[RMDB]
RNA sequence: GGGAACGACUCGAGUAGAGUCGAAAAGACAUCGACGUUGGUGUGGCGGGAUGCCGCGCAACUACCGUUGGCAUUGCUCACUGCGGAUAUGCGGGACCGCCAGGUUAUCGACGCCGCGUUCGCCGACCCGUAUCGAGCCAUUCGUGGCUCGAUACGGAAAAGAAACAACAACAACAAC
Reactivity to 2A3 in 0.01 (KOAc 150mM, MgCl2 10mM, bicine 150mM(pH8.5), 24C), signal-to-noise 2, nucleotides 027 to 126: g060a010c000a090u040c030g000a000c020g010u020u080g050g040u070g000u030g030g000c030g010g000g110a250u190g260c030c010g010c000g000c010a050a050c040u160a100c010c010g020u030u080g050g070c160a280u070u300g040c070u070c080a080c030u080g030c000g020g040a110u030a050u300g010c030g000g030g040a000c010c000g000c050c020a010g020g090u180u110a040u010c020g040a040c020g020c020c000g040c020g020u000u010c130g050c090c010g060a070c000
Reactivity to DMS in 0.01 (KOAc 150mM, MgCl2 10mM, bicine 150mM(pH8.5), 24C), signal-to-noise 1, nucleotides 027 to 126: g010a140c120a080u000c060g040a000c020g010u000u000g020g020u000g010u000g020g000c010g020g010g000a200u000g000c020c020g040c000g010c120a120a130c240u000a040c020c000g010u000u000g060g000c030a230u000u000g000c110u000c110a060c220u000g000c030g010g010a120u000a090u000g040c000g000g040g000a130c020c010g010c000c020a000g000g010u020u020a040u000c010g010a010c000g010c000c010g020c100g010u000u000c050g020c000c030g000a120c110